[RMDB]
RNA sequence: GGGAACGACUCGAGUAGAGUCGAAAAGAGGUCGCCGCGCACGAACUGGCGCUCGAUCUCCGCCUCGCUCGAGUAGGUUUCCCCGGGGAUCCCGCUUCGAGCCCUUGCCACCAUACAGGUAAUUCCCGUAGGGUAUUCCCCAGAGGGUCACUUUUUACCAUUACUACGAGUUCGCUCGUAGUAAUGGAAAAGAAACAACAACAACAAC
Reactivity to 2A3 in 0.01 (KOAc 150mM, MgCl2 10mM, bicine 150mM(pH8.5), 24C), signal-to-noise 1, nucleotides 027 to 156: g000a000g010g000u020c020g020c110c050g030c010g010c030a280c160g150a300a140c260u300g070g020c000g000c000u020c000g000a000u000c000u000c000c010g000c010c000u000c010g000c000u040c000g010a000g000u010a030g150g000u050u060u090c000c000c000c000g010g000g030g000a020u030c030c000c000g060c100u060u100c090g060a030g030c010c010c000u020u080g010c020c000a160c000c020a060u210a280c050a080g040g030u020a080a080u200u140c020c000c000g020u050a050g070g030g000u050a100u110u120c020c010c010c000a010g060a030g050g080g060u160c030a000c000u040u110u090u050u230a180

Background: This 207-nucleotide RNA was probed chemically with 2A3. 2A3 adducts were read by reverse transcription with SuperScript II with manganese. Conditions: 150 mM KOAc, 10 mM MgCl2 and 150 mM bicine (pH 8.5), 24 C. It was measured as part of the RMDB library VIROID. Reactivities are given for positions 27 through 156.